[RMDB]
This 207-nucleotide RNA was probed chemically with 2A3 and DMS. For 2A3 the reverse transcriptase was SuperScript II with manganese. For DMS, 3,997 sequencing reads were counted. Source: RMDB library M2RFPK, as collected in RNAgym.

RNA sequence: GGGAACGACUCGAGUAGAGUCGAAAAGCUUAAUAACCUGCGCUGAGCCCUUCUCCCCCAGCUUGUCUGUGUCCUAGGGAAUUGGAAGGUCAUCCUUCACAGGAUCGUGUGGAAGUCCUGCUCGGGGUCCAAACAUGGUAAUUCGUUACCAUGUUAAUGGAUGUUUCAUAUUCGUAUGAAACAUCCAAAAAGAAACAACAACAACAAC
Reactivity to 2A3 in 0.01 (KOAc 150mM, MgCl2 10mM, bicine 150mM(pH8.5), 24C), signal-to-noise 1, nucleotides 027 to 156: g020c010u140u030a110a000u070a250a110c000c080u110g100c100g000c110u050g020a050g000c020c010c000u140u080c190u150c000c010c000c010c000a000g010c040u110u160g070u030c000u010g120u010g040u020c000c010u010a090g030g000g080a090a060u090u080g070g040a020a000g060g070u140c090a070u040c000c010u050u070c030a030c000a040g100g000a070u090c040g030u100g000u030g170g040a030a030g000u020c000c000u000g050c010u000c010g060g010g030g000u000c040c070a030a000a000c000a000u000g010g000u040a020a020u000u100c110g010u000u000a000c000c000a000u020g000u030u010a000a000
Reactivity to DMS in 0.01 (KOAc 150mM, MgCl2 10mM, bicine 150mM(pH8.5), 24C), signal-to-noise 2, nucleotides 027 to 156: g000c030u010u000a130a080u000a030a130c020c030u010g040c050g010c050u000g000a060g010c020c020c020u000u000c020u000c010c010c010c010c020a070g040c070u000u000g020u010c040u000g010u010g010u000c040c030u000a120g000g020g030a060a090u000u000g040g010a090a040g020g000u000c020a060u000c030c000u000u010c110a130c040a060g030g030a070u000c050g000u010g040u000g020g010a100a110g010u000c000c000u000g000c030u000c050g010g020g010g000u010c020c030a080a020a030c000a010u000g010g000u000a010a090u000u000c300g010u010u010a030c010c000a000u000g010u000u000a020a120